The record gives the reactivity of an RNA of 177 nucleotides to DMS and 2A3. For DMS, 1,755 sequencing reads were counted. High 2A3 reactivity points to a flexible backbone, as in loops and unpaired stretches.

RNA sequence: GGGAACGACUCGAGUAGAGUCGAAAAUUUAUAAUAAAACACGAUAUGGAUGCCAAGGUGACAUCAUCUUCUACUAUCGCGACAUAUAUAGAAGCUUUAGCAAAGAAUGCAUCGGAAUUAGAACAGCGAAAUCUUCCUUUUUCGAAAGGAAGAUUUCAAAAGAAACAACAACAACAAC
Reactivity to DMS in 0.01 (KOAc 150mM, MgCl2 10mM, bicine 150mM(pH8.5), 24C), signal-to-noise 2, nucleotides 027 to 126: u020u020u050a120u040a150a220u070a100a060a000a120c070a080c020g000a050u000a040u020g020g030a010u000g010c100c070a060a060g000g010u010g020a080c120a060u020c000a010u010c010u020u000c080u000a110c060u010a050u000c110g050c010g070a270c100a130u040a070u020a090u040a130g010a150a250g010c010u000u010u010a080g000c080a040a030a040g010a080a010u030g000c000a000u000c060g000g000a020a060u000u000a130g030a090a110c180a070g000c290
Reactivity to 2A3 in 0.01 (KOAc 150mM, MgCl2 10mM, bicine 150mM(pH8.5), 24C), signal-to-noise 3, nucleotides 027 to 126: u070u080u050a150u040a180a190u090a050a110a040a000c050a020c060g070a030u020a010u220g120g020a030u110g090c040c020a110a020g090g000u070g110a160c030a050u110c000a040u000c000u000u020c000u040a030c030u000a020u030c000g020c000g090a030c030a040u180a000u060a020u030a210g060a080a050g020c010u000u080u090a020g000c010a000a050a030g050a070a020u080g000c040a020u030c000g030g040a020a060u080u090a120g050a140a070c100a100g110c030
Source: RMDB library OK1LIB, as collected in RNAgym. Reactivities are given for positions 27 through 126. 2A3 adducts were read by reverse transcription with SuperScript II with manganese.